[RMDB]
RNA sequence: GGGAACGACUCGAGUAGAGUCGAAAAUAGCGAUAAUAGCGGCGCGCGCGUAUAUACGCUAUGCGUAUCGCCGCGCGAUAUAUGCGCGCGCGGCGCGCUAUCGCAUAAUAGCGAUAAUACGCAUAGCGUGCCUUCUAUGAUUCGUCAUAGAAGGCACAAAAGAAACAACAACAACAAC
Reactivity to DMS in 0.01 (KOAc 150mM, MgCl2 10mM, bicine 150mM(pH8.5), 24C), signal-to-noise 3, nucleotides 027 to 126: u010a150g010c000g000a050u000a060a040u000a170g000c070g010g010c000g000c020g010c030g040c010g010u000a020u000a040u010a020c020g000c010u000a060u000g000c000g010u010a090u010c100g010c060c030g030c090g000c010g010a070u000a040u000a040u000g000c060g020c000g000c000g020c030g000g010c010g020c030g000c090u000a010u000c010g000c010a030u000a120a090u020a130g000c000g010a080u010a080a130u000a100c000g000c010a080u020a050g010c140
Reactivity to 2A3 in 0.01 (KOAc 150mM, MgCl2 10mM, bicine 150mM(pH8.5), 24C), signal-to-noise 2, nucleotides 027 to 126: u110a020g030c010g000a010u030a090a050u060a130g000c000g120g050c000g010c010g000c000g000c000g000u010a010u020a010u010a060c010g000c060u040a070u180g000c010g030u070a150u280c100g020c050c000g030c020g000c000g000a000u000a010u000a000u000g030c010g040c000g000c020g020c000g010g010c000g000c000g000c000u010a000u020c010g040c030a010u130a110a040u050a020g010c010g010a030u040a160a040u120a200c030g000c040a030u120a050g060c050

This 177-nucleotide RNA was probed chemically with DMS and 2A3. The reactions ran in a buffer of 150 mM KOAc, 10 mM MgCl2 and 150 mM bicine (pH 8.5), at 24 C. For 2A3 the reverse transcriptase was SuperScript II with manganese. DMS (dimethyl sulfate) methylates the pairing face of unpaired adenines and cytosines. For DMS, 3,754 sequencing reads were counted.